[RMDB]
RNA sequence: GGGAACGACUCGAGUAGAGUCGAAAAACCUGGGGAUGAAGCGGGGAUUAAAAGUGUAACAUUGCUCAUCAAAGGGCAUAAUGCUUAUGGUUAUUUAAAAGCUGAAAAAGGUGUACACCGACUAGUAUCACAAAAUAGGCUUCGGCCUAUUUUGUGAAAAAGAAACAACAACAACAAC
Reactivity to DMS in 0.01 (KOAc 150mM, MgCl2 10mM, bicine 150mM(pH8.5), 24C), signal-to-noise 2, nucleotides 027 to 126: a100c010c040u000g040g000g010g010a140u010g000a120a040g000c020g010g030g030g010a060u030u000a050a090a090a120g010u000g010u000a000a120c120a110u060u000g000c010u000c020a070u040c300a110a060a080g000g000g000c010a030u000a140a110u010g000c030u020u000a100u030g030g030u000u040a020u010u000u020a140a050a050a060g010c000u000g000a060a160a020a040a070g000g040u000g010u010a050c130a040c000c040g020a060c230u040a040g000u020a030
Reactivity to 2A3 in 0.01 (KOAc 150mM, MgCl2 10mM, bicine 150mM(pH8.5), 24C), signal-to-noise 1, nucleotides 027 to 126: a000c000c000u030g010g000g000g010a210u070g010a080a000g000c070g050g010g000g000a000u000u190a000a170a130a220g040u070g030u010a030a100c030a090u000u040g010c000u000c000a050u020c110a050a030a030g050g000g060c000a000u120a130a000u160g030c000u100u060a040u080g090g000u060u000a080u080u080u250a120a150a000a000g000c000u010g160a010a060a000a010a010g080g000u120g010u000a070c130a000c060c000g080a000c000u070a000g130u120a040
Structure probing data (DMS and 2A3) for a 177-nucleotide construct. Reactivities are given for positions 27 through 126. The RNA was probed in 150 mM KOAc, 10 mM MgCl2 and 150 mM bicine (pH 8.5) at 24 C.